[RMDB]
RNA sequence: GGGAACGACUCGAGUAGAGUCGAAAAGAUAUGGAGAAGUCUCCGAUAAGCUUGAUAUCGGAAACGAUAUAAGCUUUUGACGGAGUCACUCCUAAGUCAAAGAAAGUUUCGUUCGCGAAACUUUCAAGCUGAAUAUAACGUUCGCGUUAUAUUCAGCAAAAGAAACAACAACAACAAC
Reactivity to DMS in 0.01 (KOAc 150mM, MgCl2 10mM, bicine 150mM(pH8.5), 24C), signal-to-noise 3, nucleotides 027 to 126: g000a040u000a260u010g000g000a000g000a170a220g020u000c010u000c000c000g010a160u000a020a030g000c030u000u000g000a040u000a000u000c000g020g000a080a080a090c010g020a030u000a000u000a020a010g010c000u000u000u010u000g000a190c090g000g000a030g020u010c090a220c000u010c000c000u000a040a120g010u000c020a130a140a140g000a010a010a000g000u000u010u000c000g030u000u010c260g000c000g000a020a000a000c000u000u000u000c010a100a150
Reactivity to 2A3 in 0.01 (KOAc 150mM, MgCl2 10mM, bicine 150mM(pH8.5), 24C), signal-to-noise 3, nucleotides 027 to 126: g010a010u050a030u120g010g020a020g040a300a140g060u010c000u000c010c030g030a120u090a210a000g010c010u040u070g290a010u020a000u020c010g030g000a070a020a040c020g000a000u000a000u000a020a010g020c000u050u050u070u150g180a060c000g020g000a000g000u010c020a010c030u000c000c000u020a120a010g030u050c050a120a070a140g010a010a010a010g000u010u000u010c040g020u040u090c300g000c010g080a000a010a010c000u000u000u000c000a000a030